[RMDB]
RNA sequence: GGGAACGACUCGAGUAGAGUCGAAAAUUUGUCUGACCGAUCAUCAACGCAGCAAUGGCGUAAGACGUAUUGAUUUUUCAGACAGUUAGCGGGCUGCGGGUUGCAGUCCUUACCGGUAGAUAGGAUCGAGGUUAGAUUUCUUCGGAAAUCUAACCUCAAAAGAAACAACAACAACAAC
Reactivity to DMS in 0.01 (KOAc 150mM, MgCl2 10mM, bicine 150mM(pH8.5), 24C), signal-to-noise 2, nucleotides 027 to 126: u010u000u040g000u010c000u000g000a010c050c190g010a000u010c000a000u010c190a130a010c000g020c010a230g000c000a250a140u040g010g000c050g040u000a010a000g030a060c010g020u020a070u010u010g020a010u000u000u000u000u000c010a000g000a060c000a000g000u020u000a050g010c120g010g000g010c000u000g020c010g000g010g000u040u090g000c000a030g000u000c010c010u000u000a050c050c020g000g020u000a010g000a070u010a090g000g020a200u030c100
Reactivity to 2A3 in 0.01 (KOAc 150mM, MgCl2 10mM, bicine 150mM(pH8.5), 24C), signal-to-noise 5, nucleotides 027 to 126: u150u080u070g010u010c000u010g000a020c010c010g000a010u010c000a010u010c060a050a040c020g000c000a010g000c030a070a300u300g300g000c010g000u000a010a000g040a000c020g000u010a050u020u000g000a000u000u000u000u030u000c010a000g000a000c000a000g010u010u020a030g030c060g000g020g000c010u000g010c040g050g190g040u190u300g000c010a010g000u010c000c000u000u040a030c000c000g030g010u090a040g060a130u080a150g190g000a090u120c090
Source: RMDB libraries RFM100 and RFMREP, as collected in RNAgym. This 177-nucleotide RNA was probed chemically with DMS and 2A3. Values cover nucleotides 27 to 126. Values are in units of 0.01, from 0 to 300, in steps of 10. The reactions ran in a buffer of 150 mM KOAc, 10 mM MgCl2 and 150 mM bicine (pH 8.5), at 24 C. For 2A3 the reverse transcriptase was SuperScript II with manganese. For DMS the reverse transcriptase was MarathonRT.